[RMDB]
RNA sequence: GGGAACGACUCGAGUAGAGUCGAAAAGGCGAACUCGUCGACGAUCGAAUCGAGCAGAUGCUGUAUACGCAGUCCCGGUUGGCCGGUCUCCAGCACCGAUUUGAUGGCGUUCUUCUUGGCUCGGUCGAGUGAAGUAGAGAUUCGUCUCUACUUCACUAAAAGAAACAACAACAACAAC
Reactivity to 2A3 in 0.01 (KOAc 150mM, MgCl2 10mM, bicine 150mM(pH8.5), 24C), signal-to-noise 5, nucleotides 027 to 126: g030g000c020g030a100a100c080u050c130g030u030c030g050a050c020g030a030u050c010g020a030a040u030c010g000a010g020c040a020g030a100u070g000c010u030g050u110a110u030a130c120g000c050a020g020u070c000c020c040g010g010u120u110g080g020c000c020g000g030u040c030u030c040c000a020g000c020a010c010c020g030a040u060u040u200g080a080u090g050g040c040g020u030u020c000u040u000c010u030u050g030g000c000u010c020g000g020u030c010g000
Reactivity to DMS in 0.01 (KOAc 150mM, MgCl2 10mM, bicine 150mM(pH8.5), 24C), signal-to-noise 8, nucleotides 027 to 126: g010g000c030g010a110a080c100u000c060g020u000c030g010a220c070g000a060u010c040g010a050a100u000c020g010a050g030c070a100g010a090u000g010c030u010g010u000a090u010a120c150g010c060a070g000u010c040c070c020g010g010u000u010g020g010c040c020g010g000u000c030u000c060c040a090g000c040a070c040c020g000a080u000u010u010g010a070u000g000g010c030g010u000u000c020u000u000c030u000u000g010g010c050u000c020g010g010u000c040g000
An RNA of 177 nucleotides, treated with 2A3 and DMS and read out base by base. For 2A3, 12,021 sequencing reads were counted. The RNA was probed in 150 mM KOAc, 10 mM MgCl2 and 150 mM bicine (pH 8.5) at 24 C.